[RMDB]
RNA sequence: GGGAACGACUCGAGUAGAGUCGAAAACGCUAUCCACGACUCACUCCUGAGGUCGCGCCGCCAUCCCUUAUCACACGUUACGAUGCGUAGGAGUGCUGGCCAUCCGAGAUAGCAAGUGAGUGAGGGAUGGGGCUCGGAUGGGAGUGAGCCCAUCCUCCCAGAUAUUGCGGUUCGCCGCAAUAUCUGGAAAAGAAACAACAACAACAAC
Reactivity to 2A3 in 0.01 (KOAc 150mM, MgCl2 10mM, bicine 150mM(pH8.5), 24C), signal-to-noise 4, nucleotides 027 to 156: c050g020c090u120a110u170c110c050a070c130g050a050c020u010c000a000c000u000c010c000u120g130a100g180g260u050c010g020c020g000c010c010g270c010c000a000u000c000c020c000u010u040a040u020c020a030c010a000c090g050u070u170a090c060g070a080u120g030c080g080u070a090g030g130a120g060u150g130c040u090g080g030c040c000a020u010c010c000g050a090g010a170u070a050g000c040a170a170g000u010g020a070g050u150g030a000g000g000g000a000u000g000g000g010g000c020u010c000g060g010a050u040g020g000g000a010g010u030g020a000g010c000c000c000a040u040c010c020u070c000

Structure probing data (2A3) for a 207-nucleotide construct. The reactions ran in a buffer of 150 mM KOAc, 10 mM MgCl2 and 150 mM bicine (pH 8.5), at 24 C. It was measured as part of the RMDB library OK3TST. High 2A3 reactivity points to a flexible backbone, as in loops and unpaired stretches.